[RMDB]
RNA sequence: GGGAACGACUCGAGUAGAGUCGAAAAAUAGACAGGUCUGAGUGCCUGAAUUUGCCUUUUCAUUUUACUUCAUCCUCCAAGGAGUUCAAUCACCUGGCGUGACUUCACUUCUUUUAAGCAAAAGAGUAAACAGAUUGUAUUUCGAUACAAUCUGUUUAAAAGAAACAACAACAACAAC
Reactivity to DMS in 0.01 (KOAc 150mM, MgCl2 10mM, bicine 150mM(pH8.5), 24C), signal-to-noise 8, nucleotides 027 to 126: a050u010a090g020a300c040a020g010g010u000c020u030g020a150g000u020g010c000c010u000g010a040a040u010u010u010g000c040c020u000u010u000u010c060a070u020u010u010u020a070c050u010u010c060a070u010c030c020u000c040c070a070a050g000g000a080g010u000u000c090a080a140u000c050a050c040c030u010g010g010c090g020u000g000a040c060u000u000c080a040c040u000u000c010u000u000u010u010a050a120g000c210a030a030a040a060g010a100g000u010
Reactivity to 2A3 in 0.01 (KOAc 150mM, MgCl2 10mM, bicine 150mM(pH8.5), 24C), signal-to-noise 9, nucleotides 027 to 126: a000u120a010g120a040c010a010g020g010u040c060u300g250a060g120u300g050c000c000u000g030a040a060u080u050u090g040c010c000u100u070u040u070c100a120u030u060u080u120a070c030u030u060c010a070u030c010c020u010c030c020a040a020g030g000a040g040u040u110c040a040a060u040c010a020c030c020u050g110g000c080g050u030g030a030c020u040u030c030a020c020u030u030c000u030u090u020u090a050a020g030c030a010a030a060a060g100a050g020u050
Structure probing data (DMS and 2A3) for a 177-nucleotide construct. The RNA was probed in 150 mM KOAc, 10 mM MgCl2 and 150 mM bicine (pH 8.5) at 24 C. For DMS the reverse transcriptase was MarathonRT.